[RMDB]
RNA sequence: GGGAACGACUCGAGUAGAGUCGAAAAAUUCAAGUGAUGACAUUAUUGUUCAACUGCUAAGUGAUGUAGAUAUGAACAAAAAGGAAUUCUGAGGGGUAAAAGCAUGUCCGGUUCGCCGGACAUGCAACCUUUCAACUAACUUCGGUUAGUUGAAAGGAAAAGAAACAACAACAACAAC
Reactivity to 2A3 in 0.01 (KOAc 150mM, MgCl2 10mM, bicine 150mM(pH8.5), 24C), signal-to-noise 1, nucleotides 027 to 126: a000u080u030c030a020a000g050u030g190a070u040g010a010c020a040u070u100a030u140u000g010u000u000c030a040a070c000u000g000c000u040a120a110g240u110g200a120u100g020u020a020g010a110u190a100u200g020a020a020c010a000a000a000a020a020g050g000a030a000u050u060c020u120g040a080g000g010g010g020u050a020a200a060a000g000c010a000u010g000u000c000c000g000g000u040u010c050g000c030c050g030g000a000c010a000u020g020c000a000a010
Reactivity to DMS in 0.01 (KOAc 150mM, MgCl2 10mM, bicine 150mM(pH8.5), 24C), signal-to-noise 2, nucleotides 027 to 126: a050u040u000c030a080a090g010u000g010a010u000g010a300c060a090u010u000a150u000u000g000u000u000c010a030a090c010u000g010c010u010a070a130g040u020g020a170u000g010u000a010g010a140u000a140u000g000a000a000c010a010a000a050a080a180g000g010a070a070u010u000c000u000g000a070g000g010g000g010u020a040a040a090a130g000c000a010u000g000u000c010c030g000g000u000u000c240g010c000c000g010g000a000c020a000u000g000c010a020a010

Chemical mapping of a 177-nucleotide RNA with 2A3 and DMS. DMS adducts were read by reverse transcription with MarathonRT.